Record summary
An RNA of 177 nucleotides, treated with DMS and read out base by base. The reactions ran in a buffer of 150 mM KOAc, 10 mM MgCl2 and 150 mM bicine (pH 8.5), at 24 C. The DMS profile rests on 2,222 reads.
RNA sequence: GGGAACGACUCGAGUAGAGUCGAAAAAUUCUAUGGGGACUGGAGUUACGUUAGCUGUCCAAGGUAUCACCACACCAGGUGUAUAUAGUACUUAUGUUUUACAUGGUGAAUCCUGGUUGGAGGUUGAUGUGUAUGCUUCUUUCGAGAAGCAUACACAAAAAGAAACAACAACAACAAC
Reactivity to DMS in 0.01 (KOAc 150mM, MgCl2 10mM, bicine 150mM(pH8.5), 24C), signal-to-noise 2, nucleotides 027 to 126: a110u010u010c010u000a110u010g010g000g000g020a110c090u010g010g000a090g020u000u010a080c140g010u000u000a050g030c040u000g000u020c040c040a110a140g020g030u010a070u010c030a050c010c000a060c110a070c030c030a020g000g010u000g010u000a060u010a100u010a110g020u000a040c040u000u000a050u010g010u000u000u000u000a060c010a040u000g000g030u000g000a130a140u010c000c010u000g000g010u010u000g020g010a160g010g000u010u000g020a060